[RMDB]
RNA sequence: GGGAACGACUCGAGUAGAGUCGAAAACUAGGAUAUUCAGAAAGCAAUGAGUCCCUUCUGGGUUUGAGAUGACAUGCUCCAUUUAUUUCUCAUACUUGUCAACUCAUCAUGCAGGUGCUUUGGAUGAAGUCAUGUAAGCGUUCGCGCUUACAUGACUAAAAGAAACAACAACAACAAC
Reactivity to 2A3 in 0.01 (KOAc 150mM, MgCl2 10mM, bicine 150mM(pH8.5), 24C), signal-to-noise 1, nucleotides 027 to 126: c030u040a090g060g030a070u030a030u300u070c020a010g110a120a090a000g090c030a030a170u100g020a060g080u040c050c050c000u080u040c030u130g210g000g030u000u120u050g010a020g000a000u010g010a010c040a050u010g020c050u070c110c050a140u070u250u160a110u010u300u040c070u030c060a090u040a120c000u050u050g040u050c020a000a060c000u010c020a070u000c020a040u120g040c050a010g000g120u010g120c000u040u060u030g070g020a040u060g020a000
Reactivity to DMS in 0.01 (KOAc 150mM, MgCl2 10mM, bicine 150mM(pH8.5), 24C), signal-to-noise 1, nucleotides 027 to 126: c080u000a100g010g020a070u000a060u000u000c030a050g000a060a080a040g000c060a050a070u020g010a070g020u000c000c020c020u000u000c100u000g020g000g000u000u020u000g000a020g000a100u000g020a070c050a050u010g010c080u000c040c020a000u010u000u010a090u000u000u010c030u000c010a130u000a100c110u000u000g000u010c040a000a070c020u000c040a010u010c220a050u000g010c080a050g000g010u000g000c030u000u010u010g000g020a100u010g000a080